[RMDB]
RNA sequence: GGGAACGACUCGAGUAGAGUCGAAAAUGAGUGAAAUGCCAGCUCCCUGUACAGUUACUAGAGCUCCUGGGAAUGCAUGGCCAGUGACACAAGUGAGAAUUGGAUGUUAUGACCGUCCAGAAAAGACUGAAGACGCACUAUUCGUAGUGCGUCUUCAAAAAGAAACAACAACAACAAC
Reactivity to 2A3 in 0.01 (KOAc 150mM, MgCl2 10mM, bicine 150mM(pH8.5), 24C), signal-to-noise 2, nucleotides 027 to 126: u110g070a040g050u060g090a080a030a040u090g120c010c000a020g000c000u000c000c000c000u000g100u010a050c000a030g010u030u110a020c130u100a070g000a010g030c030u020c000c020u020g000g000g040a000a080u140g000c110a150u190g000g000c070c000a060g010u010g200a060c010a050c010a090a020g020u020g210a030g080a100a090u150u000g000g010a000u000g000u140u020a060u170g050a060c120c000g000u000c000c030a000g100a030a060a000a000g060a070c120
Reactivity to DMS in 0.01 (KOAc 150mM, MgCl2 10mM, bicine 150mM(pH8.5), 24C), signal-to-noise 2, nucleotides 027 to 126: u000g000a250g010u000g000a030a090a090u000g020c000c000a090g000c000u000c070c000c050u000g000u000a030c300a040g050u030u050a110c140u000a090g030a080g000c030u000c200c020u040g000g000g020a060a120u080g000c030a080u000g020g000c000c110a010g000u000g000a200c090a040c050a000a210g040u010g000a170g000a120a140u020u010g030g000a030u000g010u000u020a100u040g000a100c300c010g000u030c010c040a050g000a090a050a090a090g000a160c120

This 177-nucleotide RNA was probed chemically with 2A3 and DMS. In probing experiments dimethyl sulfate is read out at A N1 and C N3, which are open when not base-paired. For 2A3 the reverse transcriptase was SuperScript II with manganese.